RNA sequence: GGGAACGACUCGAGUAGAGUCGAAAAUGGGCGAUGUGUGCCGGGCGAUAGAGGAGCAGAUCGCGCCCUACACAGAGAACAUCAUGCGGAUACUGCUGCGCAACCUGGAGUGUAGCGACGUGCAGCGUCAAGCAUUAAAAUUCGUUUUAAUGCUUGAAAAAGAAACAACAACAACAAC
Reactivity to 2A3 in 0.01 (KOAc 150mM, MgCl2 10mM, bicine 150mM(pH8.5), 24C), signal-to-noise 9, nucleotides 027 to 126: u060g010g020g010c030g030a040u030g030u010g010u030g090c120c000g000g010g000c040g040a090u160a210g090a070g080g070a090g080c070a030g050a120u060c030g000c000g020c040c000c000u030a020c030a000c010a010g070a010g030a080a020c010a040u100c020a040u150g030c030g030g020a030u060a160c030u080g000c000u020g000c010g000c020a030a060c010c030u070g100g060a130g060u150g030u120a030g030c030g030a060c050g020u040g000c010a010g010c010g030
Reactivity to DMS in 0.01 (KOAc 150mM, MgCl2 10mM, bicine 150mM(pH8.5), 24C), signal-to-noise 9, nucleotides 027 to 126: u000g010g010g020c030g010a100u000g020u000g010u000g010c090c140g010g000g020c020g010a080u010a120g010a080g010g010a110g020c120a100g000a100u000c050g010c020g010c010c010c010u000a050c040a030c040a070g010a180g000a080a090c050a030u000c070a080u010g010c050g010g000a110u010a080c090u000g010c020u000g000c030g010c040a070a130c110c030u000g010g000a110g010u010g010u000a060g010c050g010a090c130g010u010g010c030a040g010c080g010